Structure probing data (DMS) for a 177-nucleotide construct. DMS adducts were read by reverse transcription with MarathonRT. It was measured as part of the RMDB library TTRINS.
RNA sequence: GGGAACGACUCGAGUAGAGUCGAAAAGAUAUGGAUCCUCCGUAGAGGCUUACUGAUGUGGCGAUUCAUAGUCGGAAACGACUAUGGGCCACAUCAGUAAGCUACCCACCUACGUGGAUCCUAAGUCGUAAUAGAAAAGCUUCGGCUUUUCUAUUACAAAAGAAACAACAACAACAAC
Reactivity to DMS in 0.01 (KOAc 150mM, MgCl2 10mM, bicine 150mM(pH8.5), 24C), signal-to-noise 2, nucleotides 027 to 126: g020a110u000a300u000g000g020a000u010c010c000u000c300c090g000u000a010g010a110g020g000c020u000u000a010c000u010g020a000u000g020u010g010g020c040g010a140u030u000c010a000u000a020g000u020c000g020g000a110a120a230c000g000a050c000u000a000u010g000g010g030c000c000a000c000a000u000c000a000g000u000a020a000g000c000u000a000c030c050c120a300c060c000u010a000c000g020u000g000g010a020u000c000c000u000a020a060g000u010c160